[RMDB]
This 177-nucleotide RNA was probed chemically with DMS and 2A3.
The 2A3 profile rests on 2,124 reads.
The data come from the RNA Mapping Database (RMDB), library OK2TRN.
Reactivities are given for positions 27 through 126.
The RNA was probed in 150 mM KOAc, 10 mM MgCl2 and 150 mM bicine (pH 8.5) at 24 C.
The DMS profile rests on 1,768 reads.
RNA sequence: GGGAACGACUCGAGUAGAGUCGAAAACAGGCCUCAGCUCUUGGUGGGCCCAGGGACACCCACACAGGUGGCCAUCACAGCCCCAUGGACAACACUAAUUGUCCACAGCAAAGGGCAAGGAAUCCUCAUAUACCGUUGGGUUCGCCCAACGGUAUAUAAAAGAAACAACAACAACAAC
Reactivity to DMS in 0.01 (KOAc 150mM, MgCl2 10mM, bicine 150mM(pH8.5), 24C), signal-to-noise 3, nucleotides 027 to 126: c260a160g010g000c010c000u010c060a280g010c030u000c020u010u000g020g040u010g050g030g010c010c020c110a140g000g000g010a030c030a020c010c000c060a130c300a080c160a070g000g000u000g000g000c010c010a060u000c100a090c300a200g010c010c000c010c030a250u000g010g000a010c000a000a030c180a160c240u010a140a170u000u000g010u020c010c000a030c140a060g010c060a050a070a050g000g020g010c020a190a020g000g000a110a070u010c010c020u010c180
Reactivity to 2A3 in 0.01 (KOAc 150mM, MgCl2 10mM, bicine 150mM(pH8.5), 24C), signal-to-noise 2, nucleotides 027 to 126: c010a000g090g100c030c000u100c060a020g000c020u050c000u050u070g050g020u110g140g040g000c020c000c000a050g070g000g000a020c000a020c030c030c030a070c010a010c010a090g010g000u020g010g060c000c010a100u150c040a010c030a000g010c000c000c000c010a010u030g000g000a010c010a030a010c080a060c250u110a110a150u030u000g000u060c010c010a000c000a030g040c050a100a000a020g000g000g020c020a020a000g020g010a010a030u030c000c000u020c030